[RMDB]
RNA sequence: GGGAACGACUCGAGUAGAGUCGAAAAGAUAUGGAACGCCCAUACUGCAACAGCGUCGCUCGGAAACGAGCGACGACAUGCAGGUGGUGCGUUCCUAAGUCAAAAGGUCUCUGUUCGCAGAGACCAAUCACUCUAUUAGCUUCGGCUAAUAGAGUGAAAAAGAAACAACAACAACAAC
Reactivity to 2A3 in 0.01 (KOAc 150mM, MgCl2 10mM, bicine 150mM(pH8.5), 24C), signal-to-noise 3, nucleotides 027 to 126: g010a020u080a060u180g010g010a000a010c010g020c020c030c050a060u200a300c040u010g060c010a080a050c050a300g070c000g000u010c010g000c010u000c000g050g030a110a150a110c030g010a020g000c000g010a000c010g000a010c010a020u030g000c010a000g030g000u000g000g080u260g000c000g000u000u010c000c000u000a000a000g010u010c020a020a040a060a250g000g000u010c000u000c010u010g050u080u120c300g030c080a000g000a000g010a000c000c010a010a000
Reactivity to DMS in 0.01 (KOAc 150mM, MgCl2 10mM, bicine 150mM(pH8.5), 24C), signal-to-noise 4, nucleotides 027 to 126: g000a060u010a300u020g000g010a010a020c000g000c000c000c000a010u000a160c000u010g000c000a030a130c260a170g000c000g010u000c000g010c000u010c000g020g000a100a110a200c020g000a010g000c010g010a000c000g010a030c110a130u010g000c000a010g000g020u000g010g000u010g030c000g010u000u000c000c010u000a020a070g010u010c040a080a070a170a140g000g010u000c000u010c000u000g010u010u010c220g030c000a020g000a010g000a010c000c000a030a020
An RNA of 177 nucleotides, treated with 2A3 and DMS and read out base by base. In probing experiments dimethyl sulfate is read out at A N1 and C N3, which are open when not base-paired. The RNA was probed in 150 mM KOAc, 10 mM MgCl2 and 150 mM bicine (pH 8.5) at 24 C. 2A3 adducts were read by reverse transcription with SuperScript II with manganese. For DMS, 3,829 sequencing reads were counted. The 2A3 profile rests on 7,056 reads.